[RMDB]
RNA sequence: GGGAACGACUCGAGUAGAGUCGAAAAGAUAUGGAGCGAUUCGUGACAUGCGUGGAGUUCGGAAACGAACUCAUACGCAACAGCACGAUCGCUCCUAAGUCAAAAGUCCAGGCUUCGGCCUGGACAAGAUUUGAUUAGACUUCGGUCUAAUCAAAUCAAAAGAAACAACAACAACAAC
Reactivity to DMS in 0.01 (KOAc 150mM, MgCl2 10mM, bicine 150mM(pH8.5), 24C), signal-to-noise 3, nucleotides 027 to 126: g000a010u000a120u000g000g000a010g020c000g000a020u020u010c010g030u000g000a050c090a160u010g020c000g010u000g000g000a010g010u000u000c000g020g000a030a030a050c020g010a000a000c010u000c000a020u000a000c000g000c000a040a060c200a180g010c000a010c000g000a020u000c000g010c010u000c000c000u000a000a050g000u000c010a120a120a160a190g000u000c000c010a000g000g000c000u000u010c260g020g000c000c000u000g010g000a000c020a010a040
Reactivity to 2A3 in 0.01 (KOAc 150mM, MgCl2 10mM, bicine 150mM(pH8.5), 24C), signal-to-noise 4, nucleotides 027 to 126: g010a000u010a020u070g000g000a000g010c010g020a040u240u300c030g080u030g050a060c120a300u300g000c000g000u010g020g010a000g000u010u000c010g000g000a010a010a000c000g010a000a000c010u000c020a030u080a020c010g020c030a060a080c090a060g000c000a000c000g000a000u000c000g010c010u000c010c000u000a010a000g000u000c000a000a000a060a180g000u000c010c000a010g010g010c000u080u220c300g200g000c000c000u020g000g000a000c010a000a000
An RNA of 177 nucleotides, treated with DMS and 2A3 and read out base by base.
The reactions ran in a buffer of 150 mM KOAc, 10 mM MgCl2 and 150 mM bicine (pH 8.5), at 24 C.
The DMS profile rests on 5,417 reads.
For 2A3, 10,605 sequencing reads were counted.